RNA sequence: GGGAACGACUCGAGUAGAGUCGAAAAACUUAGACAUUUCUUCUUCUGAUGUCCACUUGCCAUGACUGUGUGAGGAAGGGAGAGGUCUCUGAAGUGGCUACCAGGGCCCCUUGUAGAUCUCUGUGAUCCCACGAUAGCUUUUCGAAGCUAUCGUGGGAAAAGAAACAACAACAACAAC
Reactivity to 2A3 in 0.01 (KOAc 150mM, MgCl2 10mM, bicine 150mM(pH8.5), 24C), signal-to-noise 2, nucleotides 027 to 126: a020c070u050u030a090g110a050c000a100u010u110u000c000u020u010c000u030u000c070u050g050a160u060g280u030c110c000a100c000u070u060g120c010c010a150u030g070a300c050u060g000u000g060u100g220a040g020g000a050a000g000g020g010a010g000a000g020g010u010c000u030c040u080g030a040a000g050u030g030g000c000u020a110c130c040a040g110g080g000c000c000c000c000u030u010g050u040a040g000a010u000c000u000c000u000g120u060g170a100u030